[RMDB]
RNA sequence: GGGAACGACUCGAGUAGAGUCGAAAACAAUGGGGUGGCACUGAGGAUAACACCGUUGCGCACAUCAGGGCAACGGAUGCGGAUCAAGGGAACAACGCAGCCAUUAGAUACGCCAUAAUCGGCGGAACCUCUCGAUCGAAUUCGUUCGAUCGAGAGGAAAAGAAACAACAACAACAAC
Reactivity to DMS in 0.01 (KOAc 150mM, MgCl2 10mM, bicine 150mM(pH8.5), 24C), signal-to-noise 1, nucleotides 027 to 126: c120a070a000u000g000g030g030g060u000g020g000c020a060c180u000g020a130g010g020a120u010a130a130c120a020c000c000g030u020u010g000c040g020c040a070c240a110u030c170a130g000g050g000c000a060a000c020g000g000a050u000g000c090g030g010a060u000c020a050a180g020g020g000a110a020c140a020a100c080g000c110a070g000c030c020a050u010u000a030g020a120u000a140c000g000c000c040a020u040a010a110u000c170g000g000c000g020g010a130a220
Reactivity to 2A3 in 0.01 (KOAc 150mM, MgCl2 10mM, bicine 150mM(pH8.5), 24C), signal-to-noise 1, nucleotides 027 to 126: c020a000a020u090g000g030g000g110u030g010g030c020a060c050u020g070a090g060g150a080u030a060a060c000a010c010c000g010u010u030g020c180g050c020a080c010a240u200c130a150g060g110g000c020a020a010c000g000g010a030u000g030c030g080g050a060u070c030a080a050g010g020g010a060a000c010a020a070c080g000c000a040g000c000c010a020u000u040a040g020a000u180a120c020g020c000c010a020u100a060a120u020c030g000g010c120g000g010a030a010